[RMDB]
RNA sequence: GGGAACGACUCGAGUAGAGUCGAAAAAAUUUAGAUUAUCCAGGUGUAGCGGUGAAAUUCGUAGAGAUCUGGUCGAUAAUGAACCGGUGGCGAAGGCGAAAGAUAACCGCUGAAAUGCUGAAGUGAAGUUAUAUGAAAGGUUCGCCUUUCAUAUAACAAAAGAAACAACAACAACAAC
Reactivity to 2A3 in 0.01 (KOAc 150mM, MgCl2 10mM, bicine 150mM(pH8.5), 24C), signal-to-noise 3, nucleotides 027 to 126: a010a010u200u180u150a120g000a040u060u050a020u150c030c000a010g020g030u050g040u080a000g020c020g000g000u000g010a040a020a050u030u000c000g030u030a020g010a020g000a170u000c020u040g000g000u000c010g030a060u160a300a110u190g040a050a020c010c000g020g030u030g070g060c080g040a040a020g120g000c000g010a020a010a000g130a010u030a020a010c000c000g000c000u010g010a020a020a020u090g000c030u050g040a120a070g050u040g130a090a050
Reactivity to DMS in 0.01 (KOAc 150mM, MgCl2 10mM, bicine 150mM(pH8.5), 24C), signal-to-noise 6, nucleotides 027 to 126: a050a050u010u000u010a080g010a140u010u010a090u000c020c020a140g000g000u000g020u000a040g020c010g010g010u000g000a100a130a060u000u000c010g020u010a140g010a140g000a100u000c010u010g020g010u000c030g010a120u000a090a070u010g000a060a050c010c000g010g010u000g000g000c300g010a100a130g010g010c010g000a000a020a030g010a060u000a130a030c010c010g010c000u010g000a040a050a070u000g000c040u000g010a060a110g010u010g010a120a110